[RMDB]
RNA sequence: GGGAACGACUCGAGUAGAGUCGAAAAUGUGUGGACUUUUGAGAAACUGCUGCUCCAACACCCCCACCACGUUCAGAGCAGCUGGUUCCCGAGGGCGUCUGCAGGAAUAGCCCCAUGGUCCUAGGGCACUAUCAGCCUUGUUCGCAAGGCUGAUAGUAAAAGAAACAACAACAACAAC
Reactivity to DMS in 0.01 (KOAc 150mM, MgCl2 10mM, bicine 150mM(pH8.5), 24C), signal-to-noise 2, nucleotides 027 to 126: u010g020u000g030u000g000g030a030c010u010u000u010u010g010a110g010a010a020a050c040u000g020c010u000g010c020u010c010c160a040a080c100a300c100c030c010c030c030a090c120c100a050c160g030u000u000c290a100g000a040g000c020a010g020c020u000g000g010u010u000c000c000c000g000a040g000g000g020c130g010u000c010u000g040c000a010g000g020a090a110u000a120g030c020c000c000c110a110u010g020g010u020c010c010u000a110g010g010g000c060